[RMDB]
This 177-nucleotide RNA was probed chemically with DMS and 2A3.
RNA sequence: GGGAACGACUCGAGUAGAGUCGAAAAAGUCAUGCUAUACUUACGAGUAUAGCAUGACAGAGAGCUGGGUCUUUGCGGGCAAGAUGAGAGUGUCAGUUCAACUGGCCUACAAAGUCCCAGUCCUCAAUCUUAGUUUAGGGUUCGCCCUAAACUAAGAAAAAGAAACAACAACAACAAC
Reactivity to DMS in 0.01 (KOAc 150mM, MgCl2 10mM, bicine 150mM(pH8.5), 24C), signal-to-noise 2, nucleotides 027 to 126: a080g010u000c000a000u010g000c010u000a000u000a000c000u000u000a140c200g040a040g000u000a000u000a000g000c000a000u010g000a000c010a010g000a010g000a060g000c000u000g010g000g020u000c010u000u000u000g010c040g000g000g010c000a080a010g010a110u000g000a040g000a110g020u010g020u040c240a130g000u020u010c010a040a070c010u000g000g000c000c000u000a060c010a000a010a000g010u000c010c000c000a000g010u000c030c000u000c000a120a150
Reactivity to 2A3 in 0.01 (KOAc 150mM, MgCl2 10mM, bicine 150mM(pH8.5), 24C), signal-to-noise 6, nucleotides 027 to 126: a000g000u000c000a000u000g010c000u000a000u000a000c000u040u020a030c270g060a000g000u000a000u000a000g000c000a000u000g000a000c000a000g010a000g000a010g000c000u000g010g000g010u000c000u010u010u000g020c030g000g000g000c030a050a010g030a080u090g010a040g010a030g110u230g160u220c130a080g040u080u010c020a040a020c020u030g020g000c000c000u010a010c010a000a000a000g010u010c000c000c010a000g000u040c000c010u010c000a040a070
Record summary:
Values cover nucleotides 27 to 126. Reactivities are rounded to 0.1 and cut off at 0 and 3. 2A3 adducts were read by reverse transcription with SuperScript II with manganese. For DMS the reverse transcriptase was MarathonRT.